[RMDB]
RNA sequence: GGGAACGACUCGAGUAGAGUCGAAAACCUGGUCUCGGGUCGGGGCUGCUCCCGCUUACUGCCCCCUGCCCAGGCUGGUGUGCACCCCCUCUGGCUGCUUUCAAGGCCUCUUCUCUCUUCUCGGCAGGAUAUUAUGUAACUUCGGUUACAUAAUAUCAAAAGAAACAACAACAACAAC
Reactivity to DMS in 0.01 (KOAc 150mM, MgCl2 10mM, bicine 150mM(pH8.5), 24C), signal-to-noise 7, nucleotides 027 to 126: c020c010u000g010g010u000c010u010c150g030g000g020u010c300g000g000g000g000c070u000g010c120u000c040c020c040g010c140u000u000a180c090u000g000c040c010c010c010c080u000g000c010c010c020a040g000g000c010u000g000g010u010g010u000g000c120a170c040c010c010c030c020u000c040u000g020g010c030u000g010c070u010u000u010c090a100a150g000g010c020c010u000c030u000u000c020u000c020u000c020u000u000c010u000c040g010g010c100a110g000
Reactivity to 2A3 in 0.01 (KOAc 150mM, MgCl2 10mM, bicine 150mM(pH8.5), 24C), signal-to-noise 3, nucleotides 027 to 126: c010c000u020g000g030u020c030u030c120g030g000g030u060c030g000g000g010g000c020u030g020c030u100c050c020c000g050c080u080u180a110c030u070g020c020c000c000c000c010u020g000c010c000c000a000g000g000c010u030g010g030u130g010u050g060c080a140c000c010c000c020c000u010c030u010g050g000c010u040g030c010u050u130u160c070a100a040g070g020c010c010u020c010u040u010c020u000c000u000c010u050u050c030u000c010g050g000c010a010g000